The record gives the reactivity of an RNA of 177 nucleotides to DMS and 2A3. The reactions ran in a buffer of 150 mM KOAc, 10 mM MgCl2 and 150 mM bicine (pH 8.5), at 24 C. High DMS reactivity at an A or C suggests that its Watson-Crick edge is free.
[RMDB]
RNA sequence: GGGAACGACUCGAGUAGAGUCGAAAAGUGUUGCCCUGGCUGCUGGCCCGCGCGGUGGGCGCCGAAGCGGCCGCGCAGCGGGAGGCCACCCCGUUGGUCAACACCGCCAGCUCGCUGCUGAUUACCGACAAUGCUUGGUUUUCGAACCAAGCAUUGUAAAAGAAACAACAACAACAAC
Reactivity to DMS in 0.01 (KOAc 150mM, MgCl2 10mM, bicine 150mM(pH8.5), 24C), signal-to-noise 3, nucleotides 027 to 126: g010u000g000u010u010g000c010c030c020u000g010g010c030u020g030c050u030g000g030c000c030c030g010c020g030c090g010g000u000g000g010g010c040g010c000c090g000a050a040g000c050g000g000c040c000g030c070g020c010a130g030c010g000g000g010a280g000g000c030c040a060c050c100c020c070g000u020u010g000g000u020c010a070a080c060a090c080c080g000c020c000a070g000c040u020c130g010c040u030g000c020u020g010a120u010u020a080c040c070g000
Reactivity to 2A3 in 0.01 (KOAc 150mM, MgCl2 10mM, bicine 150mM(pH8.5), 24C), signal-to-noise 5, nucleotides 027 to 126: g030u050g040u090u070g050c020c000c000u010g080g000c020u030g000c030u040g050g070c000c040c010g040c000g000c020g040g070u090g060g150g050c100g020c020c030g040a150a030g000c020g020g020c000c000g000c010g000c000a040g010c000g000g010g000a070g020g040c010c010a030c020c020c000c000g100u120u080g000g010u050c030a030a030c010a030c030c000g010c010c000a020g000c010u060c040g010c020u050g000c000u020g040a090u050u110a090c040c020g000